[RMDB]
RNA sequence: GGGAACGACUCGAGUAGAGUCGAAAAAGUCACAGAUGAUUGGCAUCGCUCACGCUCAAGCCGCAAUAGUAGAAACUAUCGUUUUGAUAGAUACGUCAGUGGCUGCGGAACCCGCAGGCGACGAACCGAUGACCUGGUCAUUCGUGACCAGGUCAUCAAAAGAAACAACAACAACAAC
Reactivity to DMS in 0.01 (KOAc 150mM, MgCl2 10mM, bicine 150mM(pH8.5), 24C), signal-to-noise 2, nucleotides 027 to 126: a050g030u000c000a030c000a020g000a020u000g000a140u010u010g020g010c010a050u000c060g050c040u000c040a070c110g010c070u000c160a210a050g000c000c000g030c030a100a090u000a090g040u000a020g030a120a100a160c010u000a000u000c000g000u010u000u000u020g000a010u000a000g050a080u000a120c060g010u000c190a100g020u000g000g010c020u000g010c050g000g000a140a080c080c040c030g030c100a120g010g010c000g000a070c050g010a070a060c230c060
Reactivity to 2A3 in 0.01 (KOAc 150mM, MgCl2 10mM, bicine 150mM(pH8.5), 24C), signal-to-noise 2, nucleotides 027 to 126: a000g030u030c020a000c020a010g170a100u080g000a020u070u120g060g000c010a010u070c000g020c070u080c030a080c030g010c020u080c050a070a020g030c000c000g060c070a010a100u080a060g020u020a000g070a090a190a030c030u030a020u020c030g050u010u090u020u300g000a000u010a040g020a050u070a080c000g000u020c000a020g030u000g080g000c000u010g010c000g040g040a110a130c070c030c000g000c000a010g060g030c040g040a050c030g030a060a050c050c040